This 177-nucleotide RNA was probed chemically with DMS.
[RMDB]
RNA sequence: GGGAACGACUCGAGUAGAGUCGAAAAGCUCAGUGUGUGUCGGCCCGUCGUCUAGUGCUGGUUCUAGGGCUGGGGCGUCAGCAUCCAGGUCUGACGGGACGGGCAGUAUCUCGCCAUCAACGAUAAAUCUUCGUAGUUACUUCGGUAACUACGAAGAAAAAGAAACAACAACAACAAC
Reactivity to DMS in 0.01 (KOAc 150mM, MgCl2 10mM, bicine 150mM(pH8.5), 24C), signal-to-noise 1, nucleotides 027 to 126: g010c050u000c030a030g020u000g000u000g030u000g000u000c000g000g030c010c010c000g010u000c010g020u010c010u010a030g020u000g000c030u000g030g040u010u010c100u010a050g010g000g010c000u000g020g000g020g010c070g010u040c070a030g020c030a050u020c070c100a070g010g000u000c020u000g010a040c050g000g010g000a000c030g010g020g010c010a020g000u010a050u000c050u000c070g000c020c030a060u000c090a040a110c060g000a080u020a010a090a100
It was measured as part of the RMDB library M2PK90.